Chemical mapping of a 177-nucleotide RNA with 2A3.
RNA sequence: GGGAACGACUCGAGUAGAGUCGAAAAAUGUGCAUAAGCCUAACGUUAUAUUGAUGGAUGAGCCAUUAGGUGCAUUAGAUGCAUUUACACGUUAUAAACUUCAGGAUCAACUAGUGCAACUAAAACAGCAUGACUGAAUCUUCGGAUUCAGUCAUGCAAAAGAAACAACAACAACAAC
Reactivity to 2A3 in 0.01 (KOAc 150mM, MgCl2 10mM, bicine 150mM(pH8.5), 24C), signal-to-noise 2, nucleotides 027 to 126: a000u000g100u160g030c020a040u030a170a070g000c000c000u100a160a070c160g210u170u050a130u030a040u300u200g170a150u100g060g000a040u090g000a010g040c070c000a030u000u010a020g000g000u000g000c000a010u060u000a000g070a110u070g080c110a010u000u000u060a070c090a080c040g030u160u000a030u040a290a070a000c000u120u070c160a030g100g000a080u080c000a000a040c050u010a000g000u000g000c000a020a020c030u030a030a030a030a030c100a040
Conditions: 150 mM KOAc, 10 mM MgCl2 and 150 mM bicine (pH 8.5), 24 C.